Source: RMDB library RNAMAK, as collected in RNAgym. Chemical mapping of a 207-nucleotide RNA with 2A3. Reactivities are given for positions 27 through 156. The reactions ran in a buffer of 150 mM KOAc, 10 mM MgCl2 and 150 mM bicine (pH 8.5), at 24 C.
RNA sequence: GGGAACGACUCGAGUAGAGUCGAAAAGAUAUGGAGCUCUUGUCAGAAACCGCGUCCCACGAAGAACAGGAAUCGGAAACGAUUCCUGGGAGUGGGACCGGUUUCUUGGAUUUAGAGCUCCUAAGUCAAAACGAAUGUGAGUUCGCUCACAUUCGAAGUAGGUAAUUCGUUUCGACGAAUUACCUACAAAAGAAACAACAACAACAAC
Reactivity to 2A3 in 0.01 (KOAc 150mM, MgCl2 10mM, bicine 150mM(pH8.5), 24C), signal-to-noise 1, nucleotides 027 to 156: g000a010u040a020u110g000g000a000g000c000u010c000u010u000g000u000c000a000g010a000a000a000c020c000g050c290g040u000c000c020c000a000c010g140a160a180g010a080a010c000a000g000g010a000a000u000c000g030g020a010a100a060c000g000a000u000u010c010c000u000g010g000g010a010g000u000g000g000g000a000c120c000g000g000u000u040u000c000u000u000g000g000a010u160u280u130a000g010a000g020c000u000c000c000u000a000a000g010u000c010a020a000a020a100c000g000a000a000u000g000u010g000a000g020u130u160c290g060c060u000c000a000c000a000u000u000c000g000a010a010

For 2A3 the reverse transcriptase was SuperScript II with manganese.